[RMDB]
RNA sequence: GGGAACGACUCGAGUAGAGUCGAAAACGCACAGCCAAGAGGAGGGCACCGCUCGAUGACACGGCCCAGAAGGACAAUAGGGGCAUUGCUGAGGAGGCGGCAGAGGACACGCCAAUGAUGCAGCACCGCUCUCAAGACGAUUCGUCGUCUUGAGAGCAAAAGAAACAACAACAACAAC
Reactivity to DMS in 0.01 (KOAc 150mM, MgCl2 10mM, bicine 150mM(pH8.5), 24C), signal-to-noise 2, nucleotides 027 to 126: c130g000c130a060c020a050g000c000c030a040a070g000a080g020g040a090g010g000g010c040a110c050c110g000c060u000c040g000a060u010g010a110c080a140c090g000g040c010c020c090a130g010a140a090g000g000a050c180a070a140u010a140g060g000g000g000c080a110u020u000g000c050u010g000a090g000g000a120g020g000c050g000g000c030a050g020a040g010g050a070c090a100c050g020c040c010a120a120u000g000a020u010g000c060a020g000c070a090c200c140
Reactivity to 2A3 in 0.01 (KOAc 150mM, MgCl2 10mM, bicine 150mM(pH8.5), 24C), signal-to-noise 1, nucleotides 027 to 126: c070g030c020a020c040a020g040c000c010a090a020g050a050g030g050a020g060g040g000c030a010c030c040g040c000u070c030g050a080u070g010a060c020a020c130g040g000c000c000c000a050g110a070a020g110g050a030c040a100a070u100a200g070g000g000g010c010a030u050u130g000c000u010g020a010g050g010a020g020g040c010g000g010c010a010g060a030g120g000a030c040a030c140g010c000c000a050a080u100g070a000u050g000c000a010g060c010a010c030c050